[RMDB]
RNA sequence: GGGAACGACUCGAGUAGAGUCGAAAAGACACGACGGAGACGUCGUGUCAAAGAGUGGGAAACCACUCAAAGAGCCACAGCUUCGGCUGUGGCUCAAGGCGCGGCAUCGUCCGCGGAACAAACAUAAACGCUACCUAAAUUUCGAUUUAGGUAGCGUAAAAGAAACAACAACAACAAC
Reactivity to DMS in 0.01 (KOAc 150mM, MgCl2 10mM, bicine 150mM(pH8.5), 24C), signal-to-noise 1, nucleotides 027 to 126: g040a030c030a000c020g020a010c000g000g000a230g000a190c020g010u000c010g020u000g020u000c010a010a050a110g000a000g020u000g000g000g020a140a060a280c000c000a000c000u000c020a020a050a150g000a020g020c000c000a020c010a000g010c000u010u020c300g010g000c000u000g070u000g030g000c000u000c010a010a030g000g010c000g020c000g020g020c010a140u000c230g000u040c000c030g030c000g010g000a080a110c190a050a030a050c240a070u010a080a090
The record gives the reactivity of an RNA of 177 nucleotides to DMS. For DMS the reverse transcriptase was MarathonRT. DMS (dimethyl sulfate) methylates the pairing face of unpaired adenines and cytosines. For DMS, 796 sequencing reads were counted.